[RMDB]
RNA sequence: GGGAACGACUCGAGUAGAGUCGAAAAGCGCCCCUUUUCGAAGGGGCGCACUGGAAAUAAAGCCGAAAGGCUAGGCAUUCCUUAAUUGGCGAAAGCCUGCCACUAUUGAGAUCUUCGGAUCUCAAAAGCAAAGUUGUAGAUUCGUCUACAACUUUGCAAAAGAAACAACAACAACAAC
Reactivity to 2A3 in 0.01 (KOAc 150mM, MgCl2 10mM, bicine 150mM(pH8.5), 24C), signal-to-noise 2, nucleotides 027 to 126: g000c000g020c050c000c000c000u040u050u030u060c150g090a030a000g000g000g000g000c000g000c010a000c000u040g050g050a000a060a070u160a150a110a010g000c020c000g020a110a010a030g000g000c010u020a020g020g040c050a040u030u060c000c000u040u080a130a140u200u100g010g000c040g030a050a010a030g010c000c000u010g010c010c020a050c060u130a240u130u090g000a010g000a020u000c010u040u020c210g100g000a010u000c000u000c000a010a000a000a000
Reactivity to DMS in 0.01 (KOAc 150mM, MgCl2 10mM, bicine 150mM(pH8.5), 24C), signal-to-noise 1, nucleotides 027 to 126: g010c000g000c000c010c000c000u000u000u010u000c140g010a030a010g020g020g010g020c030g020c000a020c040u000g010g000a040a020a140u010a080a130a060g010c000c010g010a060a070a120g010g000c010u030a030g010g050c130a200u000u000c000c000u000u000a020a120u000u000g010g040c050g010a080a060a170g010c010c000u030g010c030c010a140c250u010a110u000u000g000a000g000a000u000c000u010u000c190g010g000a000u000c000u000c000a030a010a080a070
The record gives the reactivity of an RNA of 177 nucleotides to 2A3 and DMS. Values cover nucleotides 27 to 126. The DMS profile rests on 862 reads. The RNA was probed in 150 mM KOAc, 10 mM MgCl2 and 150 mM bicine (pH 8.5) at 24 C. 2A3 adducts were read by reverse transcription with SuperScript II with manganese.